An RNA of 177 nucleotides, treated with DMS and read out base by base.
The RNA was probed in 150 mM KOAc, 10 mM MgCl2 and 150 mM bicine (pH 8.5) at 24 C.
RNA sequence: GGGAACGACUCGAGUAGAGUCGAAAAGAUAUGGAGAGCGUAAGGCUGAUGACCAUACACUAUUGACGAUAUGUCGGAAACGACAUAUCGUCAAAACUGUAUGCAAGGCUAUCGCUCUCCUAAGUCACUGUGAAGGUAACUUCGGUUACCUUCACAGAAAAGAAACAACAACAACAAC
Reactivity to DMS in 0.01 (KOAc 150mM, MgCl2 10mM, bicine 150mM(pH8.5), 24C), signal-to-noise 1, nucleotides 027 to 126: g000a020u000a260u000g000g000a000g000a020g070c030g000u000a160a300g000g020c010u000g060a110u030g010a150c300c000a000u000a000c000a010c020u000a300u000u000g010a010c040g010a030u000a000u000g030u010c020g000g000a020a060a150c010g080a060c000a000u000a000u000c000g000u000c000a020a000a000a140c300u000g030u000a000u000g000c060a030a040g010g020c000u000a290u000c000g010c010u000c000u000c000c000u000a000a080g020u000c030a240

For DMS the reverse transcriptase was MarathonRT.